[RMDB]
Annotation
Source: RMDB library OK3TST, as collected in RNAgym. Structure probing data (DMS and 2A3) for a 207-nucleotide construct.
RNA sequence: GGGAACGACUCGAGUAGAGUCGAAAAAGAGGCCACACCCAUAAAAAAGUGUCGAAGUGAUCAGGCAGUGACACCACCUUCCAAUGACAGCACAUGUAAUUGUAAUUAAUUUCUCAGAGCAAUUAUGCAGGCAGGACUUUGAGCCAAACCAUCAAAACUGGUAUUUAAUGUUCGCAUUAAAUACCAGAAAAGAAACAACAACAACAAC
Reactivity to DMS in 0.01 (KOAc 150mM, MgCl2 10mM, bicine 150mM(pH8.5), 24C), signal-to-noise 2, nucleotides 027 to 156: a160g010a070g030g000c010c040a050c040a100c030c000c020a100u030a000a100a100a110a100a090g000u020g030u010c040g000a140a100g010u010g010a070u000c040a080g020g030c030a090g020u000g000a120c030a070c030c000a070c020c000u020u000c000c000a050a150u000g010a110c020a080g010c030a050c020a110u000g010u000a030a040u000u000g010u020a030a210u010u000a040a140u020u000u000c040u000c040a090g000a300g000c010a040a030u000u000a060u010g020c070a050g010g020c040a110g020g030a020c010u000u000u000g010a070g010c050c030a040a050a040c040c030a060u000c060a050a060a060a170
Reactivity to 2A3 in 0.01 (KOAc 150mM, MgCl2 10mM, bicine 150mM(pH8.5), 24C), signal-to-noise 4, nucleotides 027 to 156: a010g040a030g000g020c030c000a020c020a020c040c020c030a060u240a020a190a020a010a010a010g060u030g010u050c030g040a080a030g020u050g080a090u070c030a050g060g000c020a020g030u030g080a010c010a020c040c010a020c000c010u030u050c030c000a050a090u070g020a050c020a040g050c020a030c010a070u090g030u060a020a060u080u030g030u050a040a060u110u130a060a100u090u220u050c080u020c040a040g040a020g050c010a010a050u050u040a030u160g020c010a010g030g010c010a000g020g020a010c010u080u080u110g010a010g020c010c000a080a050a020c030c010a080u120c080a030a090a010a080
The DMS profile rests on 3,231 reads.
2A3 adducts were read by reverse transcription with SuperScript II with manganese.
DMS adducts were read by reverse transcription with MarathonRT.